Chemical mapping of a 177-nucleotide RNA with 2A3 and DMS.
RNA sequence: GGGAACGACUCGAGUAGAGUCGAAAAACUUACCCGCGGAAGGACGGAAAGACCCCGUGAACCUUCACUGCAGCUUGGCAUUGGCCGCUGGUCCGGCGCGUAGAGGAUAGGCGGGAGGCAUCGAUGCUUUUGGAAAAGCAUUCGUGCUUUUCCAAAAAAAAGAAACAACAACAACAAC
Reactivity to 2A3 in 0.01 (KOAc 150mM, MgCl2 10mM, bicine 150mM(pH8.5), 24C), signal-to-noise 3, nucleotides 027 to 126: a000c040u080u100a120c000c010c000g010c010g050g000a060a030g020g010a110c030g030g080a110a070a060g090a090c010c000c000c000g010u020g040a040a070c000c030u040u050c030a020c020u050g000c010a030g010c020u090u180g020g000c020a070u020u100g030g030c020c020g000c030u050g010g010u040c000c010g030g000c040g000c020g030u030a050g050a050g120g040a040u050a070g030g000c010g030g000g000a050g030g000c000a020u050c030g030a050u080g010c000
Reactivity to DMS in 0.01 (KOAc 150mM, MgCl2 10mM, bicine 150mM(pH8.5), 24C), signal-to-noise 6, nucleotides 027 to 126: a060c170u020u020a110c030c010c000g030c100g020g010a060a050g000g010a080c030g010g000a120a080a090g000a150c150c040c000c020g000u010g010a120a130c040c030u000u000c020a140c090u020g020c050a060g020c070u020u020g010g000c040a080u010u010g010g010c020c020g020c020u000g000g000u010c040c020g000g000c050g010c070g000u020a050g010a130g010g000a070u010a120g010g020c040g000g010g000a080g000g010c040a050u010c050g020a060u020g000c080